Conditions: 150 mM KOAc, 10 mM MgCl2 and 150 mM bicine (pH 8.5), 24 C.
The record gives the reactivity of an RNA of 177 nucleotides to 2A3 and DMS.
It was measured as part of the RMDB library OK1LIB.
DMS adducts were read by reverse transcription with MarathonRT.
For 2A3 the reverse transcriptase was SuperScript II with manganese.
For DMS, 4,214 sequencing reads were counted.
[RMDB]
RNA sequence: GGGAACGACUCGAGUAGAGUCGAAAAGUGUCAUUUCCAGCAAUUUGUUCGGCAACAAUACUUGCUGCACGGUGAGCGCCCCAAGCUAAAGGAACACUAGCCGGUAGAUCGACAUGUCGAUAAUGUGGUAGGGAAAAAUCUUCGGAUUUUUCCCUACAAAAGAAACAACAACAACAAC
Reactivity to 2A3 in 0.01 (KOAc 150mM, MgCl2 10mM, bicine 150mM(pH8.5), 24C), signal-to-noise 6, nucleotides 027 to 126: g080u060g080u060c030a060u010u060u060c020c010a000g010c020a060a070u090u060u110g040u060u100c060g160g010c030a030a010c010a060a130u090a180c060u050u050g020c010u020g010c030a030c110g070g020u070g040a030g010c020g050c020c000c000c010a050a000g030c010u110a100a030a030g080g020a070a030c040a040c050u010a030g020c000c020g040g040u040a050g010a090u080c030g040a020c040a100u190g060u070c020g030a060u080a200a100u240g030u090g100
Reactivity to DMS in 0.01 (KOAc 150mM, MgCl2 10mM, bicine 150mM(pH8.5), 24C), signal-to-noise 3, nucleotides 027 to 126: g010u000g010u030c030a080u000u000u040c110c000a070g000c040a090a050u000u020u000g000u000u000c080g000g000c080a060a040c110a080a070u060a020c210u010u000g010c000u010g000c100a050c080g020g020u000g020a190g000c050g000c020c000c010c050a090a120g020c060u010a060a090a080g010g020a090a070c150a070c060u000a080g000c030c030g000g020u010a060g010a030u000c030g040a000c090a080u000g000u000c000g010a090u000a020a050u030g010u000g000